[RMDB]
RNA sequence: GGGAACGACUCGAGUAGAGUCGAAAAUCACACACUAUAAGACAUCUGCGACGUAUCUUUGGACAAUACGAUAAUGUCAGAGUUCUUCCAAAGAACUGACAUCAGGUGUCUUAAGAUAGUGUGUGAAGAUAGUAAUCUCAUUCGUGAGGUUGCUAUCAAAAGAAACAACAACAACAAC
Reactivity to DMS in 0.01 (KOAc 150mM, MgCl2 10mM, bicine 150mM(pH8.5), 24C), signal-to-noise 9, nucleotides 027 to 126: u000c000a010c000a000c010a010c000u000a020u010a020a020g010a010c000a000u000c000u000g020c300g000a170c060g010u000a010u000c050u010u020u020g010g010a140c300a120a030u010a020c030g010a150u010a110a030u000g000u010c020a040g000a080g000u010u010c020u000u040c240c230a070a060a160g010a020a030c000u000g000a050c040a030u010c000a010g000g020u000g020u000c000u000u010a050a060g050a280u000a010g010u000g010u000g000u000g000a010a040
Reactivity to 2A3 in 0.01 (KOAc 150mM, MgCl2 10mM, bicine 150mM(pH8.5), 24C), signal-to-noise 9, nucleotides 027 to 126: u020c000a000c000a000c000a000c000u000a000u000a050a000g000a000c000a000u000c000u020g060c090g160a100c030g070u010a060u040c080u090u200u240g110g040a060c080a100a030u030a040c010g040a040u070a160a040u120g020u020c010a010g020a020g120u040u000c010u110u060c090c070a140a190a000g000a010a010c000u010g000a000c000a020u050c000a020g000g000u000g000u000c000u000u000a000a000g040a010u030a000g000u000g000u000g000u000g000a000a000